[RMDB]
RNA sequence: GGGAACGACUCGAGUAGAGUCGAAAAGAUAUGGAGCGCCAUGUAAGGCGCUCGGAAACGAGAACUACGCUUGAGUGGAACUACGCUCCUAAGUCAAAACAUCGAUAGCGUUCGCGCUAUCGAUGAACAUACACAUCCACUUCGGUGGAUGUGUAUGAAAAGAAACAACAACAACAAC
Reactivity to 2A3 in 0.01 (KOAc 150mM, MgCl2 10mM, bicine 150mM(pH8.5), 24C), signal-to-noise 5, nucleotides 027 to 126: g020a010u050a010u130g010g000a000g000c020g000c020c020a030u070g220u300a160a140g000g000c010g020c010u000c010g000g000a020a020a000c020g000a010g000a090a070c220u290a040c280g020c030u080u120g260a080g070u020g000g030a080a030c110u170a050c290g000c000u010c000c010u020a070a020g010u010c040a000a040a080a160c010a010u020c010g000a000u000a000g000c020g020u050u050c300g000c000g000c130u000a000u000c000g000a010u000g000a000a000
Reactivity to DMS in 0.01 (KOAc 150mM, MgCl2 10mM, bicine 150mM(pH8.5), 24C), signal-to-noise 5, nucleotides 027 to 126: g000a030u010a190u010g010g010a020g020c000g000c000c010a010u000g000u010a180a110g010g000c000g000c000u000c010g000g000a030a040a120c020g010a030g000a110a070c090u020a300c020g010c010u000u000g010a260g010u000g000g010a090a040c140u020a300c020g010c000u000c000c000u000a050a140g010u000c030a090a050a100a200c000a000u000c000g000a010u000a000g010c000g000u000u010c210g020c000g000c000u000a000u000c000g010a000u000g000a040a130